RNA sequence: GGGAACGACUCGAGUAGAGUCGAAAAGGGGUCAGGACUUGGAUUUACCAGUUGAUCGAAGAGACGACGAUCUUUAUGUCUGUCCUGAAGCCUCCACGGGACAGACAUAAAGGGAGUCUUUAAUUGAUGCUGGUUGUCAGUCCUGACGGAGGCACCCGUUUAAUGACUGGUUCGCCAGUCAUUAAACAAAAGAAACAACAACAACAAC
Reactivity to DMS in 0.01 (KOAc 150mM, MgCl2 10mM, bicine 150mM(pH8.5), 24C), signal-to-noise 1, nucleotides 027 to 156: g010g020g070g040u000c000a040g000g020a040c000u000u010g000g000a060u010u000u000a030c030c030a110g020u000u010g010a160u000c060g030a200a160g010a130g000a030c050g050a150c080g000a260u000c000u010u000u000a060u030g030u010c000u000g030u000c010c000u000g030a040a140g040c070c030u000c010c010a300c010g020g000g020a000c010a040g000a000c000a000u000a010a000a010g020g000g010a300g050u010c000u030u010u000a060a130u000u010g050a190u000g010c000u000g010g010u000u010g000u000c000a040g010u000c000c000u000g000a030c010g010g030a000g090g100c000a130c060c030c060
Reactivity to 2A3 in 0.01 (KOAc 150mM, MgCl2 10mM, bicine 150mM(pH8.5), 24C), signal-to-noise 3, nucleotides 027 to 156: g180g000g040g000u020c000a000g000g010a000c040u250u300g140g010a070u240u270u150a030c000c020a020g020u110u170g280a060u030c060g080a300a090g020a180g020a130c070g020a030c050g080a160u120c020u000u000u000a000u010g000u000c000u010g000u000c010c010u000g010a040a010g000c000c000u000c000c000a010c000g000g000g000a000c000a000g000a000c000a000u000a000a000a000g010g010g000a010g000u010c000u010u040u010a130a120u050u120g010a000u020g030c000u000g000g000u000u000g010u010c000a000g000u000c000c000u000g000a000c000g000g000a010g000g010c020a010c010c010c010
Chemical mapping of a 207-nucleotide RNA with DMS and 2A3. High 2A3 reactivity points to a flexible backbone, as in loops and unpaired stretches. For 2A3 the reverse transcriptase was SuperScript II with manganese. For DMS, 2,090 sequencing reads were counted. The RNA was probed in 150 mM KOAc, 10 mM MgCl2 and 150 mM bicine (pH 8.5) at 24 C.